[RMDB]
RNA sequence: GGGAACGACUCGAGUAGAGUCGAAAAGUUCGUGGCGCCUUGUGACCCCGGGCCCCUGCCGCCUGCAAGUCGAAAUUGCGCUGUGCUCCUGUGCUACGGCCUGUGGCUGGACUGCCUGCUGCUGCCCAGAUAUAUGAGUUUUCGAACUCAUAUAUCUAAAAGAAACAACAACAACAAC
Reactivity to 2A3 in 0.01 (KOAc 150mM, MgCl2 10mM, bicine 150mM(pH8.5), 24C), signal-to-noise 9, nucleotides 027 to 126: g050u060u070c030g030u070g030g020c030g020c020c030u070u100g090u110g090a120c010c000c010c000g010g030g000c000c010c000c010u040g020c010c010g010c000c000u030g010c040a050a040g040u050c030g080a040a080a110u110u090g010c030g000c030u030g040u070g040c020u040c020c020u060g040u080g040c010u060a040c030g050g010c000c010u060g020u040g050g000c010u020g020g040a050c030u050g020c000c010u020g010c010u020g000c010u030g010c000c000c000
Reactivity to DMS in 0.01 (KOAc 150mM, MgCl2 10mM, bicine 150mM(pH8.5), 24C), signal-to-noise 9, nucleotides 027 to 126: g010u010u000c050g020u000g010g010c050g020c030c050u000u010g010u010g010a140c060c030c060c050g010g010g010c020c030c040c050u010g010c040c040g010c050c030u000g010c070a050a070g010u010c080g010a070a080a100u010u010g010c040g020c040u000g010u010g010c050u000c040c030u000g010u010g010c030u000a090c090g000g010c030c030u000g020u000g000g020c020u000g000g010a110c070u010g010c020c010u000g010c040u000g000c040u010g000c010c010c040